[RMDB]
RNA sequence: GGGAACGACUCGAGUAGAGUCGAAAAUUAGCAUUACCAUAUCCUAUUUGGCAAUGAAUUUCAUAUACUAGAGUAUGUUCUUAAGAUUGGAUUGUCUAAAGUGAAAUUCAUUGCCAAAUAGGAUAUGGCACUUUAGGACCUUCGGGUCCUAAAGUGCAAAAGAAACAACAACAACAAC
Reactivity to 2A3 in 0.01 (KOAc 150mM, MgCl2 10mM, bicine 150mM(pH8.5), 24C), signal-to-noise 2, nucleotides 027 to 126: u080u050a060g120c150a080u050u140a040c020c000a020u000a000u000c010c000u010a000u000u000u000g000g000c000a020a000u000g010a000a000u000u000u000c010a010u060a020u010a120c090u010a030g010a020g100u100a070u140g050u080u010c000u010u200a120a150g010a160u070u120g040g030a030u000u130g070u100c000u030a100a000a020g010u000g010a010a010a000u000u000c010a000u000u000g000c000c000a000a000a000u000a000g020g000a000u000a000u000g000
Reactivity to DMS in 0.01 (KOAc 150mM, MgCl2 10mM, bicine 150mM(pH8.5), 24C), signal-to-noise 2, nucleotides 027 to 126: u020u020a100g020c170a080u010u010a190c070c010a000u000a000u000c010c000u000a030u000u010u000g000g000c010a000a000u000g000a010a000u000u000u000c000a000u000a100u020a110c180u000a010g000a030g020u000a060u000g000u000u000c020u000u010a110a150g000a080u010u020g000g000a020u010u000g000u000c000u010a020a030a130g040u000g000a010a010a000u000u000c010a000u000u000g010c000c000a000a000a000u000a010g000g000a000u000a000u000g000